The record gives the reactivity of an RNA of 177 nucleotides to DMS and 2A3. For DMS the reverse transcriptase was MarathonRT. Conditions: 150 mM KOAc, 10 mM MgCl2 and 150 mM bicine (pH 8.5), 24 C.
RNA sequence: GGGAACGACUCGAGUAGAGUCGAAAAGGGACUCUCGGGUCCGUCGUUCCAUCCUUUUCUUACCUUGUGGCCGGCAUGGCCCCAGCCUCCUCGCUGGCGCCGGCCGGGCAACGAUCCGAGGGAACUAGGAAAUAUAUGUGUUCGCACAUAUAUUUCCAAAAGAAACAACAACAACAAC
Reactivity to DMS in 0.01 (KOAc 150mM, MgCl2 10mM, bicine 150mM(pH8.5), 24C), signal-to-noise 3, nucleotides 027 to 126: g000g010g010a150c020u000c000u000c060g000g010g000u010c070c110g000u000c020g010u000u000c020c010a140u040c060c070u000u000u010u000c120u010u010a090c050c030u000u000g020u000g010g000c010c030g010g000c010a070u000g040g010c000c160c010c000a030g000c000c170u000c150c120u000c210g000c000u010g010g030c300g020c010c000g000g020c000c000g020g000g010c030a050a030c100g000a050u000c080c020g030a020g010g000g000a090a080c170u020a120
Reactivity to 2A3 in 0.01 (KOAc 150mM, MgCl2 10mM, bicine 150mM(pH8.5), 24C), signal-to-noise 3, nucleotides 027 to 126: g070g020g010a040c010u010c000u010c020g000g010g090u070c080c000g030u010c010g010u040u000c010c010a100u160c040c000u110u160u120u110c060u160u160a160c030c010u070u040g040u070g230g150c000c020g010g010c060a230u170g030g000c000c000c010c000a000g000c010c040u160c030c030u110c090g000c010u000g000g000c010g000c010c000g030g000c000c000g000g010g010c000a020a010c030g060a030u000c040c030g000a000g030g020g010a060a030c060u090a090